[RMDB]
This 177-nucleotide RNA was probed chemically with DMS and 2A3. It was measured as part of the RMDB library TTRDES. The reactions ran in a buffer of 150 mM KOAc, 10 mM MgCl2 and 150 mM bicine (pH 8.5), at 24 C. Reactivities are given for positions 27 through 126. For 2A3, 4,472 sequencing reads were counted. DMS adducts were read by reverse transcription with MarathonRT.
RNA sequence: GGGAACGACUCGAGUAGAGUCGAAAAGAUAUGGAGACCCGAAGAUCGAUAAGCUGCGUUCGGAAACGAACGGCAGCUUUUGACGAUUCAAGGGUCUCCUAAGUCAAAACCUAGCUUCGGCUAGGAACUCAAAAUGUAAGUUCGCUUACAUUUUGAGAAAAGAAACAACAACAACAAC
Reactivity to DMS in 0.01 (KOAc 150mM, MgCl2 10mM, bicine 150mM(pH8.5), 24C), signal-to-noise 2, nucleotides 027 to 126: g010a080u010a300u000g010g010a000g020a000c000c000c010g000a300a300g010a020u000c000g020a160u010a020a030g010c000u010g030c000g010u000u000c010g020g000a160a070a190c000g010a010a000c000g040g040c000a010g000c000u000u000u000u000g030a220c120g000a020u000u010c030a030a300g010g000g010u000c000u000c010c000u000a010a060g010u020c020a120a050a080a130c010c000u000a000g010c010u000u010c280g030g000c000u000a000g010g000a030a110
Reactivity to 2A3 in 0.01 (KOAc 150mM, MgCl2 10mM, bicine 150mM(pH8.5), 24C), signal-to-noise 2, nucleotides 027 to 126: g010a010u060a000u140g010g000a000g000a000c000c010c000g070a180a020g020a030u030c020g010a040u020a160a000g000c020u010g020c030g010u020u010c000g000g010a070a080a080c010g000a000a010c040g160g000c000a010g000c000u020u010u000u000g000a010c000g000a010u070u020c030a030a020g000g000g010u010c010u000c000c000u020a000a000g000u000c000a010a020a110a180c010c010u000a000g010c000u080u070c290g050g010c000u020a020g010g000a010a010